The record gives the reactivity of an RNA of 177 nucleotides to DMS.
The data come from the RNA Mapping Database (RMDB), library OK2TRN.
Values cover nucleotides 27 to 126.
DMS adducts were read by reverse transcription with MarathonRT.
RNA sequence: GGGAACGACUCGAGUAGAGUCGAAAAGAACGGUCGGAAAUCGUUCGUCGAGUGCAAUGGCAUAAGCCUGCCUGACUGCAAGACUGACAAGUCGAGCAGAGACGAAAGUCGGUCAUAGUGAUCCGGAUCACCCGGGGAUGUUCGCAUCCCCGGGUGAAAAAGAAACAACAACAACAAC
Reactivity to DMS in 0.01 (KOAc 150mM, MgCl2 10mM, bicine 150mM(pH8.5), 24C), signal-to-noise 1, nucleotides 027 to 126: g040a120a050c010g070g080u000c090g000g000a100a220a060u000c040g030u000u000c000g040u000c010g000a070g000u010g010c070a110a090u000g030g040c000a220u050a120a180g060c030c070u000g000c060c010u000g000a280c000u000g000c000a010a270g000a000c000u000g030a160c300a110a000g010u000c020g000a300g010c030a000g000a060g010a040c000g000a000a060a120g000u000c050g060g000u000c030a080u000a090g000u000g000a070u000c030c060g000g000a180